[RMDB]
RNA sequence: GGGAACGACUCGAGUAGAGUCGAAAACGCACUCGCAGCUUAAUAACCUGCGCUGAGCCCUUCUCCCCCAGCUUGCCUGUGUCCUAGGGAAUUGGAAGGUCAUCCUUCACAGGAUCGUGUGGAAGUGAUUACUCGUGAGUGUUCGCACUCACGAGAAGAUUUCUGGUAUGUUCGCAUACCAGAAAUCAAAAGAAACAACAACAACAAC
Reactivity to 2A3 in 0.01 (KOAc 150mM, MgCl2 10mM, bicine 150mM(pH8.5), 24C), signal-to-noise 3, nucleotides 027 to 156: c050g010c010a060c020u000c010g010c000a000g000c010u060u030a010a030u040a040a020c000c010u000g020c020g030c210u060g000a050g030c010c030c000u140u050c120u080c020c000c000c010c000a010g030c020u040u130g030c020c010u040g000u010g040u100c010c020u030a060g030g030g010a070a070u070u080g060g010a040a030g040g010u110c030a070u100c020c000u020u050c000a020c000a030g020g020a040u080c070g030u050g010u060g070g020a020a070g030u040g060a050u090u120a030c000u000c000g000u000g000a000g000u010g010u050u060c080g040c030a000c010u000c000a000c000g000a000g010a000a000
Reactivity to DMS in 0.01 (KOAc 150mM, MgCl2 10mM, bicine 150mM(pH8.5), 24C), signal-to-noise 2, nucleotides 027 to 156: c060g030c030a070c050u000c020g030c040a070g020c030u010u000a190a200u000a140a140c210c010u000g020c020g030c110u010g000a090g010c030c010c040u000u000c020u020c050c000c000c020c040a080g000c070u000u000g000c020c010u020g000u010g020u000c080c020u010a090g010g010g020a070a110u000u020g020g020a090a040g000g030u010c060a110u000c010c020u000u000c040a140c050a030g030g000a070u000c090g020u010g010u010g000g000a090a260g000u010g000a110u000u000a150c000u000c000g030u010g010a020g000u000g000u000u000c300g010c010a000c000u000c000a020c010g010a020g020a050a050